[RMDB]
RNA sequence: GGGAACGACUCGAGUAGAGUCGAAAAGCGAGUACACGCAGUAUAGUGCUACUUGUGUGAGUAUACUUUUAGUACAAGCGAGUACACGCAGUAUAGUGCUACUUGUGUGAGAAUACUUUUAGUACAAUGUUACAGACGGAUUCGUCCGUCUGUAACAAAAAGAAACAACAACAACAAC
Reactivity to 2A3 in 0.01 (KOAc 150mM, MgCl2 10mM, bicine 150mM(pH8.5), 24C), signal-to-noise 4, nucleotides 027 to 126: g030c050g020a010g010u010a000c030a020c000g010c010a000g020u080a100u110a160g020u020g020c000u000a010c030u100u100g010u000g010u020g080a050g060u100a040u030a090c000u020u040u060u130a050g020u040a080c060a100a030g070c000g030a000g000u010a010c040a000c020g000c010a000g000u060a060u040a100g000u000g000c000u000a020c010u020u090g000u000g010u000g060a080g070a090a060u050a030c000u060u040u030u030a030g000u030a030c010a080a130
Reactivity to DMS in 0.01 (KOAc 150mM, MgCl2 10mM, bicine 150mM(pH8.5), 24C), signal-to-noise 3, nucleotides 027 to 126: g030c040g000a120g020u000a010c010a070c000g000c000a080g030u080a170u030a120g010u010g010c030u020a010c030u010u000g010u000g000u020g020a080g040u050a080u000a020c010u000u000u020u010a090g000u010a050c060a120a250g020c080g010a070g010u000a010c000a020c030g020c040a060g000u000a040u040a080g010u000g000c010u010a010c000u000u010g020u000g060u010g010a220g000a110a100u000a010c000u000u000u000u000a060g000u000a040c070a080a090
Source: RMDB library OK1LIB, as collected in RNAgym.
Structure probing data (2A3 and DMS) for a 177-nucleotide construct.
For 2A3, 3,324 sequencing reads were counted.
For 2A3 the reverse transcriptase was SuperScript II with manganese.
The DMS profile rests on 4,085 reads.
The RNA was probed in 150 mM KOAc, 10 mM MgCl2 and 150 mM bicine (pH 8.5) at 24 C.